[RMDB]
RNA sequence: GGGAACGACUCGAGUAGAGUCGAAAACUGCGGACCAGCGAUUUUGCCGAACAACGAAGACCACUCUUGUGAAAUGUGGCAAGAAAUCGUUGACCAAAAGUGCUGAAAAAUGUGUCAACAGUGGUCGCCUGCCGUGAUCGUUCGCGAUCACGGCAGGAAAAGAAACAACAACAACAAC
Reactivity to 2A3 in 0.01 (KOAc 150mM, MgCl2 10mM, bicine 150mM(pH8.5), 24C), signal-to-noise 1, nucleotides 027 to 126: c010u000g000c120g040g000a160c000c060a020g030c000g000a010u000u000u100u200g010c000c010g060a050a050c000a000a000c050g010a080a040g100a060c050c000a060c000u010c000u260u000g130u010g290a010a020a000u180g000u200g040g000c000a040a040g050a090a110a000u030c010g000u000u000g000a000c000c000a010a020a020a020g110u140g110c000u060g000a090a070a050a050a000u260g090u000g080u080c080a050a000c040a050g140u050g000g000u030c000g000
Structure probing data (2A3) for a 177-nucleotide construct. The data come from the RNA Mapping Database (RMDB), library OK1LIB. Values cover nucleotides 27 to 126.